[RMDB]
RNA sequence: GGGAACGACUCGAGUAGAGUCGAAAAGCACCUGCCGCGUACCGGCCACUUUGUGCCGUACUUACGUCAUCUUUUUCCUAAAUCGAGGUGGCAUUUACACACAGCGCCAGUGCACACAGCAAGUGCACUUCUAGCCCACUUUCGAGUGGGCUAGAAGAAAAGAAACAACAACAACAAC
Reactivity to DMS in 0.01 (KOAc 150mM, MgCl2 10mM, bicine 150mM(pH8.5), 24C), signal-to-noise 2, nucleotides 027 to 126: g000c030a120c030c040u010g010c060c070g000c070g010u000a060c100c040g020g000c030c050a080c230u020u010u010g020u000g050c050c080g000u000a030c100u000u010a040c100g020u000c030a060u010c020u030u000u000u000u000c080c080u020a040a120a090u000c130g000a070g000g000u000g010g010c000a060u000u010u000a060c050a130c050a030c060a030g000c150g000c070c080a000g030u010g000c000a030c030a080c110a140g000c100a070a050g000u000g000c010a100
Reactivity to 2A3 in 0.01 (KOAc 150mM, MgCl2 10mM, bicine 150mM(pH8.5), 24C), signal-to-noise 2, nucleotides 027 to 126: g040c020a010c030c040u000g000c030c000g060c030g010u000a040c030c030g010g040c000c010a090c080u270u200u210g020u110g040c090c060g000u020a020c000u050u110a050c070g040u000c000a040u050c020u070u060u040u000u040c030c070u110a180a160a170u160c040g020a020g020g000u000g010g000c000a020u000u060u030a040c060a000c010a000c010a000g030c040g020c070c000a000g000u000g070c020a030c000a000c020a000g040c040a100a000g000u030g050c000a000